[RMDB]
RNA sequence: GGGAACGACUCGAGUAGAGUCGAAAACGUGGUCGACAUAGGUGUUCAUAGGUCCAGAGUCUAUAUUGGGGACAAAUGAGUCGAAUCUAUGGGAGAACCGGAAACGACGCUGGCUGCCUAGACAAAAUCAUGGUUCUAUCUUCGGGUGGAGUCAUGAAAAAGAAACAACAACAACAAC
Reactivity to DMS in 0.01 (KOAc 150mM, MgCl2 10mM, bicine 150mM(pH8.5), 24C), signal-to-noise 9, nucleotides 027 to 126: c070g010u010g000g010u000c020g010a110c060a060u020a060g010g010u010g000u010u010c020a050u010a040g010g010u000c010c010a110g000a080g010u010c120u020a110u030a120u010u020g010g010g010g010a070c030a020a050a060u020g000a050g010u010c070g000a100a080u000c020u010a040u020g000g000g010a140g010a140a080c020c000g010g000a050a080a170c090g000a040c050g000c030u000g000g000c110u010g000c010c010u000a050g000a070c150a050a050a070a100
Reactivity to 2A3 in 0.01 (KOAc 150mM, MgCl2 10mM, bicine 150mM(pH8.5), 24C), signal-to-noise 7, nucleotides 027 to 126: c040g040u050g020g020u030c020g020a070c020a030u100a030g030g000u030g010u030u030c010a020u020a020g020g000u000c010c000a010g020a020g050u000c040u050a130u010a050u100u160g060g000g000g000a010c000a000a070a020u040g010a000g020u040c010g010a010a020u000c010u010a050u050g000g010g010a080g020a030a030c000c000g000g000a020a050a000c010g020a000c010g000c020u010g030g000c030u050g020c000c000u030a030g010a060c060a020a070a000a040